[RMDB]
RNA sequence: GGGAACGACUCGAGUAGAGUCGAAAAAGCCUGACCAUUACGAUGGUCAGGCAUUUACGGACCCAAAGGCAGUAUUUGGUAUUUCCAUAUUUAUUAAUAGGGAAUAAUAAUAGAAUUGACGUAAAAACUGAUUCAUGACUUUCGAGUCAUGAAUCAGAAAAGAAACAACAACAACAAC
Reactivity to 2A3 in 0.01 (KOAc 150mM, MgCl2 10mM, bicine 150mM(pH8.5), 24C), signal-to-noise 1, nucleotides 027 to 126: a000g000c000c000u050g000a000c000c000a000u020u000a010c230g100a000u000g000g000u000c000a000g010g010c000a000u000u000u000a000c050g000g070a040c000c000c000a000a020a020g180g080c060a020g020u120a060u040u060u000g090g000u000a020u010u090u000c000c070a020u070a040u120u200u140a300u110u250a210a060u020a020g000g010g010a030a030u010a000a020u110a050a050u000a120g120a070a000u040u000g060a100c040g090u170a000a000a040a040a000

Conditions: 150 mM KOAc, 10 mM MgCl2 and 150 mM bicine (pH 8.5), 24 C. Chemical mapping of a 177-nucleotide RNA with 2A3. 2A3 adducts were read by reverse transcription with SuperScript II with manganese.